[RMDB]
RNA sequence: GGGAACGACUCGAGUAGAGUCGAAAAGUCGCGGGCGGUUUCGGCGGCGGCGGUGUGGCGCCCAGUGGCGGCGGCGACGACAAACACGUCAAGGCCACUUCGGCCGCCGAUGCCGCGAUCCAGAUGGGCCGAAUCGCUGAUUCGUCAGCGAUUCGGCAAAAGAAACAACAACAACAAC
Reactivity to 2A3 in 0.01 (KOAc 150mM, MgCl2 10mM, bicine 150mM(pH8.5), 24C), signal-to-noise 1, nucleotides 027 to 126: g060u000c080g030c070g070g000g030c110g060g000u000u010u010c000g010g030c090g000g000c000g040g000c000g000g000u090g050u060g020g160c080g000c040c000c030a100g040u070g080g000c110g010g070c010g000g010c190g030a210c000g050a030c240a030a070a000c240a000c090g030u050c020a040a050g090g030c030c000a000c000u140u150c110g090g000c000c010g020c000c000g000a000u000g000c000c000g030c050g100a000u040c000c000a010g000a270u180g200g000